[RMDB]
RNA sequence: GGGAACGACUCGAGUAGAGUCGAAAACUCUGCAUAUUCGUAUGCAGAGAAAUAACGGUCGGCUCAUGCAGCUAGUCCAACAUGCUGCUCGACCUUUUGGUAAAAACCGGAGGUUCGCCUCCGGUAAACUUAUUCUUACGUUCGCGUAAGAAUAAGUAAAAGAAACAACAACAACAAC
Reactivity to 2A3 in 0.01 (KOAc 150mM, MgCl2 10mM, bicine 150mM(pH8.5), 24C), signal-to-noise 1, nucleotides 027 to 126: c000u000c010u000g000c000a000u020a020u040u060c120g090u050a010u010g000c000a000g000a010g020a010a040a000u030a050a010c050g000g020u000c000g010g000c000u050c240a040u180g010c000a000g000c000u020a030g080u050c020c010a030a000c010a060u130g000c010u000g000c020u020c010g040a020c000c000u050u140u040u210g080g010u050a010a050a040a050a000c000c000g000g000a000g000g030u040u070c150g080c000c000u000c000c070g020g010u000a000a010
Reactivity to DMS in 0.01 (KOAc 150mM, MgCl2 10mM, bicine 150mM(pH8.5), 24C), signal-to-noise 6, nucleotides 027 to 126: c000u000c000u000g000c000a000u000a020u000u010c180g030u000a000u000g000c000a010g010a010g010a010a030a040u000a040a070c140g010g010u000c010g010g020c110u010c230a060u010g010c010a020g010c010u000a200g000u000c040c040a090a170c120a090u010g000c020u000g000c000u000c010g000a010c000c000u000u000u000u000g010g010u010a070a070a050a100a030c000c000g010g000a020g010g010u000u010c240g010c010c000u000c000c000g000g000u000a000a020